[RMDB]
RNA sequence: GGGAACGACUCGAGUAGAGUCGAAAAAUAUGGUUCAAAGAACACAGGAUAUCACAUUUUGAAGGCAGGAACUAUUGCACAAUUGAUCUUAUUCGCUAGUGAGUCACUUGAUUCUGAGAUCAAGGAACUGCAUUAUUAGGUUCGCCUAAUAAUGCAGAAAAGAAACAACAACAACAAC
Reactivity to DMS in 0.01 (KOAc 150mM, MgCl2 10mM, bicine 150mM(pH8.5), 24C), signal-to-noise 6, nucleotides 027 to 126: a080u010a070u010g010g000u010u000c070a070a140a060g000a050a060c060a060c080a050g010g000a050u000a060u000c040a040c050a140u010u000u000u010g010a100a090g000g030c100a030g010g000a040a050c090u010a040u000u000g010c130a060c120a060a070u000u010g010a040u000c020u000u010a060u000u000c110g010c110u010a050g020u000g000a080g010u010c040a080c040u000u000g000a090u000u000c090u000g000a190g010a010u000c010a020a040g010g010a070a130
Reactivity to 2A3 in 0.01 (KOAc 150mM, MgCl2 10mM, bicine 150mM(pH8.5), 24C), signal-to-noise 6, nucleotides 027 to 126: a000u180a070u100g040g000u030u040c050a130a020a090g050a100a020c070a000c010a040g030g030a020u050a050u110c050a020c030a130u060u100u090u160g090a090a050g060g000c020a010g030g020a030a030c010u040a080u080u190g010c060a010c040a130a090u030u070g010a030u020c010u040u080a050u120u120c030g010c060u020a040g020u030g100a040g080u070c030a030c130u030u050g020a050u100u010c070u130g060a050g010a090u020c010a020a020g050g010a070a060
Structure probing data (DMS and 2A3) for a 177-nucleotide construct. DMS adducts were read by reverse transcription with MarathonRT. The data come from the RNA Mapping Database (RMDB), library OK2TST. Conditions: 150 mM KOAc, 10 mM MgCl2 and 150 mM bicine (pH 8.5), 24 C.